[RMDB]
RNA sequence: GGGAACGACUCGAGUAGAGUCGAAAAGGUAUUCCAUUAUAACCAUCGACAAUAAGCAGUUUCCUAUUCCAUCAAACUGUAUAGGUAUGUCCUCUGCCAAGUACAUAAAUUCUAGCAUCGAUCAAGAUACUUUAAUACAUGUUUGUAACCUCGAGCAAUCCCACUCUCGAUUCGUCGAGAGUGGGAUAAAAGAAACAACAACAACAAC
Reactivity to 2A3 in 0.01 (KOAc 150mM, MgCl2 10mM, bicine 150mM(pH8.5), 24C), signal-to-noise 1, nucleotides 027 to 156: g010g000u100a070u150u090c050c080a090u250u100a050u110a110a120c050c000a020u090c020g070a010c000a050a150u140a270a000g100c190a040g000u030u040u020c030c010u070a080u110u010c070c040a080u030c000a040a000a060c020u030g000u070a030u040a070g070g010u020a000u040g300u000c000c000u050c000u000g040c000c000a090a080g040u020a040c000a110u240a110a250a000u150u010c030u040a000g060c000a010u130c020g020a030u080c130a040a040g080a110u020a050c010u000u080u130a130a000u030a000c050a010u250g000u030u000u010g050u020a110a060c000c030u010c020g020a020g000c030a030